[RMDB]
RNA sequence: GGGAACGACUCGAGUAGAGUCGAAAACCUGCAUUCGUGCAGGAUCAUCGCUGUGAAGACGCUAGACUUAGACUGACUCAUGAUGAAGGGCCAAAGCUCAGAGCUGCAGAUGCCGUUCGCGGCAUAAUCUUCUCGAACAAUUCGUUGUUCGAGAAGAAAAAGAAACAACAACAACAAC
Reactivity to 2A3 in 0.01 (KOAc 150mM, MgCl2 10mM, bicine 150mM(pH8.5), 24C), signal-to-noise 2, nucleotides 027 to 126: c010c000u010g000c000a000u040u060c220g070u030g020c020a020g000g020a020u100c040a040u020c010g040c120u080g060u110g030a060a020g070a010c030g060c050u050a020g010a190c020u070u010a030g020a150c000u030g040a020c000u020c080a030u070g030a060u050g050a080a110g030g020g000c030c070a080a050a020g000c020u020c080a030g020a020g100c030u060g010c020a030g020a170u020g040c000c010g010u030u090c220g010c040g000g000c010a020u070a020a010
Reactivity to DMS in 0.01 (KOAc 150mM, MgCl2 10mM, bicine 150mM(pH8.5), 24C), signal-to-noise 2, nucleotides 027 to 126: c000c000u000g000c020a090u010u000c180g000u010g000c020a030g000g000a080u010c060a110u000c040g000c060u000g050u000g010a160a050g000a140c120g010c050u000a050g020a050c060u010u000a040g010a130c000u010g000a130c060u010c060a080u000g030a050u010g010a150a110g000g000g000c030c050a090a110a030g000c050u000c070a130g000a120g020c090u000g010c050a160g000a050u000g020c000c000g040u000u000c280g010c030g000g000c020a050u010a040a150